RNA sequence: GGGAACGACUCGAGUAGAGUCGAAAAGGCUGUUGAGCUGCAAAUCCUCAGGGAUGAAUUACUCUCAGGCCACUACCAGCCCUUGCCCGCCAGACGGGUUUACAUCCCUAAAAGCAACGGCAAACUGUAUAGCGGCUAAUUUCGAUUAGCCGCUAUAAAAAGAAACAACAACAACAAC
Reactivity to DMS in 0.01 (KOAc 150mM, MgCl2 10mM, bicine 150mM(pH8.5), 24C), signal-to-noise 1, nucleotides 027 to 126: g030g010c010u000g010u010u000g000a010g050c100u020g050c070a090a250a060u010c030c000u020c120a120g000g010g000a000u000g010a160a060u000u000a060c050u030c010u000c060a120g000g000c030c100a100c090u010a060c110c090a110g000c020c010c050u010u000g000c000c000c150g020c000c020a090g000a250c270g010g000g010u000u010u000a090c260a110u010c000c000c000u000a070a110a130a150g000c030a090a070c130g020g000c010a090a090a100c220u000g000
Structure probing data (DMS) for a 177-nucleotide construct. DMS adducts were read by reverse transcription with MarathonRT. The data come from the RNA Mapping Database (RMDB), library OK2TRN. The DMS profile rests on 595 reads.